[RMDB]
RNA sequence: GGGAACGACUCGAGUAGAGUCGAAAAUCUAACUUCUUCGGAAGUUAGAAAAUAAAAUCAGCGGUAAAUAUCGUGGCGUAAUUACCGCUGAACGCCUCGAUAAAAGAUUGUGCUUCGGCACAAUCAACUUAUUAGGGCAGUUCGCUGCCCUAAUAAGAAAAGAAACAACAACAACAAC
Reactivity to 2A3 in 0.01 (KOAc 150mM, MgCl2 10mM, bicine 150mM(pH8.5), 24C), signal-to-noise 3, nucleotides 027 to 126: u010c000u010a000a000c000u000u000c010u030u000c170g110g010a000a000g000u000u000a000g010a000a000a010a010u060a000a050a000a070u030c010a000g000c010g000g010u020a030a050a040u080a040u100c150g190u190g220g060c060g030u030a040a010u010u010a010c000c000g010c010u010g000a000a000c020g040c000c010u060c070g040a060u080a200a130a000a050g000a000u010u000g000u000g000c010u010u070c210g090g000c000a000c000a010a000u000c000a000a000
Reactivity to DMS in 0.01 (KOAc 150mM, MgCl2 10mM, bicine 150mM(pH8.5), 24C), signal-to-noise 2, nucleotides 027 to 126: u010c000u000a000a000c000u000u000c000u010u000c170g010g000a010a010g010u000u000a000g000a010a010a050a070u000a060a090a170a060u000c000a000g000c000g010g010u000a020a020a060u000a030u010c020g010u020g010g010c090g020u000a030a030u000u000a000c010c010g000c000u010g000a010a050c180g010c030c000u000c210g010a110u010a070a090a090a070g000a010u000u000g010u000g000c000u000u010c230g020g000c000a010c000a010a000u000c000a050a100